[RMDB]
RNA sequence: GGGAACGACUCGAGUAGAGUCGAAAAAGGCAAGAUGUUGGCAUAGCUGAGUCCCAUUCAAUAUUUGUAUCUCAGCCAUGCUACAUAGGGCCAUGAAAAGCUGACACUGUGUUCGCACAGUGUCAGCGUACCUUCUAGGCUUCGGCCUAGAAGGUACAAAAGAAACAACAACAACAAC
Reactivity to DMS in 0.01 (KOAc 150mM, MgCl2 10mM, bicine 150mM(pH8.5), 24C), signal-to-noise 2, nucleotides 027 to 126: a090g030g000c020a040a040g020a010u000g000u000u000g040g000c000a010u000a030g010c000u010g010a020g000u010c160c220c090a120u010u010c150a060a110u030a140u000u000u010g010u030a130u010c020u000c010a020g000c000c030a010u010g020c010u000a010c000a010u000a010g020g000g010c010c000a070u030g010a080a060a120a160g000c000u000g010a010c010a000c000u000g020u000g010u000u000c220g010c010a000c000a010g020u000g000u000c000a000g000c000
Reactivity to 2A3 in 0.01 (KOAc 150mM, MgCl2 10mM, bicine 150mM(pH8.5), 24C), signal-to-noise 3, nucleotides 027 to 126: a000g020g000c020a000a030g030a050u030g040u240u100g060g000c000a000u010a010g010c000u000g000a000g050u050c040c070c010a030u140u080c050a060a090u070a170u280u130u130g080u070a110u040c000u000c000a000g000c020c010a010u010g010c020u010a000c000a010u020a010g060g000g020c010c010a010u070g110a020a140a000a010g010c010u000g010a010c000a020c000u000g000u010g050u090u110c220g040c130a010c000a000g000u000g010u010c000a000g000c010